[RMDB]
RNA sequence: GGGAACGACUCGAGUAGAGUCGAAAAGCCACCAUUUUUCCAAGCACUUUGGUUCUCAGCCUGGCACAGCCACUACUUCCACCAUCUUUGCACAUUUCAGCUAGUGUCCUGGAGGCCUCAGAUGACAAAGCAGUAUGGAAGUCUCCACUGAAGUGGCAAUGAAGUUUUGGUUCGCCAAAACUUCAUUAAAAGAAACAACAACAACAAC
Reactivity to DMS in 0.01 (KOAc 150mM, MgCl2 10mM, bicine 150mM(pH8.5), 24C), signal-to-noise 1, nucleotides 027 to 156: g010c010c010a120c040c030a160u010u000u000u000u030c040c000a060a160g000c010a020c090u000u020u000g020g010u000u000c060u000c070a250g010c000c060u000g030g040c000a110c100a180g020c010c010a050c030u000a070c060u000u000c010c000a110c040c040a140u000c060u000u010u010g000c050a060c030a080u000u040u000c020a060g040c060u000a080g090u010g020u000c060c000u000g060g000a080g040g000c030c040u000c040a050g030a090u020g000a210c030a060a080a100g000c080a120g040u010a110u040g010g000a020a110g010u000c010u000c020c030a110c100u010g000a060a080g110u000g000g040c090
Reactivity to 2A3 in 0.01 (KOAc 150mM, MgCl2 10mM, bicine 150mM(pH8.5), 24C), signal-to-noise 2, nucleotides 027 to 156: g050c000c000a040c000c040a120u050u060u000u140u070c020c010a050a010g020c020a050c040u090u070u090g050g000u160u090c040u030c060a030g010c010c040u030g010g040c030a010c030a080g020c010c000a030c040u090a010c000u090u010c000c020a050c030c020a090u050c050u070u030u050g030c090a040c020a230u080u060u050c010a040g020c040u100a070g030u050g110u210c020c050u080g090g000a040g020g050c000c000u050c020a030g020a110u090g030a100c030a010a080a030g060c050a030g050u130a030u110g020g000a010a000g040u030c020u010c020c020a060c050u050g020a110a000g030u000g010g000c010
Structure probing data (DMS and 2A3) for a 207-nucleotide construct.
2A3 adducts were read by reverse transcription with SuperScript II with manganese.
For DMS, 1,585 sequencing reads were counted.
The RNA was probed in 150 mM KOAc, 10 mM MgCl2 and 150 mM bicine (pH 8.5) at 24 C.
Reactivities are given for positions 27 through 156.